[RMDB]
RNA sequence: GGGAACGACUCGAGUAGAGUCGAAAACGUCAAGGAUUCGUCCUUGACGAAAGUCGCGGCUUGUGGGCGUAUACGGCUGCGCACACACACGACCCUCAAGCCAAACAGGUGGAUUCGUCCACCUGAAGUCGGUAACUAGAUUCGUCUAGUUACCGACAAAAGAAACAACAACAACAAC
Reactivity to DMS in 0.01 (KOAc 150mM, MgCl2 10mM, bicine 150mM(pH8.5), 24C), signal-to-noise 3, nucleotides 027 to 126: c010g020u000c000a010a010g030g000a040u010u020c220g010u000c000c000u000u000g010a020c000g020a020a040a090g030u010c060g020c120g000g020c060u010u000g000u000g010g000g020c020g010u000a040u000a110c150g020g000c050u010g000c020g010c010a040c070a040c110a110c090a020c000g000a060c000c000c000u000c030a020a060g000c010c030a080a050a220c040a000g000g040u000g010g000a020u000u000c170g010u000c000c000a000c010c000u000g010a010a050
Reactivity to 2A3 in 0.01 (KOAc 150mM, MgCl2 10mM, bicine 150mM(pH8.5), 24C), signal-to-noise 4, nucleotides 027 to 126: c010g000u000c000a000a000g000g000a020u030u090c170g060u010c040c000u000u000g000a000c000g000a010a010a000g060u050c040g010c110g170g020c010u030u020g000u010g000g020g000c010g020u000a050u030a100c060g050g020c040u130g060c080g040c030a040c000a000c000a000c000a010c110g300a300c010c000c000u010c010a000a000g000c010c000a000a040a010c000a000g010g000u000g000g010a020u040u060c190g050u000c030c000a000c000c010u000g010a040a010